[RMDB]
RNA sequence: GGGAACGACUCGAGUAGAGUCGAAAAGUCCCGUGCGCGGGUCCACCAUGAGCGCCUCCGCGUUGUGUGGGCCGUCGGGAUAUUUGAGAUUGAGCGUGUCCACACCGGUCAGCGUGGUGGUGACGGGUGGCAUUAAUGGGUUCGCCCAUUAAUGCCAAAAAGAAACAACAACAACAAC
Reactivity to 2A3 in 0.01 (KOAc 150mM, MgCl2 10mM, bicine 150mM(pH8.5), 24C), signal-to-noise 6, nucleotides 027 to 126: g080u020c000c000c000g000u130g020c210g020c020g030g030g010u030c020c000a010c010c000a120u140g080a050g090c040g020c040c020u090c030c030g040c030g060u130u170g030u020g010u010g040g000g000c040c000g000u010c030g010g150g040a090u080a220u140u170u170g220a230g040a130u090u110g010a050g070c010g010u180g010u140c020c000a000c020a010c040c030g110g100u150c040a010g020c030g030u040g010g040u020g010g020u020g030a030c010g030g000g050
Reactivity to DMS in 0.01 (KOAc 150mM, MgCl2 10mM, bicine 150mM(pH8.5), 24C), signal-to-noise 3, nucleotides 027 to 126: g000u010c000c000c000g030u000g010c130g030c060g010g010g010u010c000c010a050c010c030a070u010g020a160g020c020g000c020c020u000c040c050g000c060g000u000u010g010u020g030u000g000g000g000c000c030g000u010c020g000g010g010a080u000a100u050u050u040g000a120g000a160u010u020g010a170g000c040g010u030g010u000c000c000a040c010a070c040c210g000g010u020c160a130g000c010g020u010g000g000u010g000g000u000g000a050c020g030g000g010
Record summary
Conditions: 150 mM KOAc, 10 mM MgCl2 and 150 mM bicine (pH 8.5), 24 C. Chemical mapping of a 177-nucleotide RNA with 2A3 and DMS. Source: RMDB library OK1LIB, as collected in RNAgym.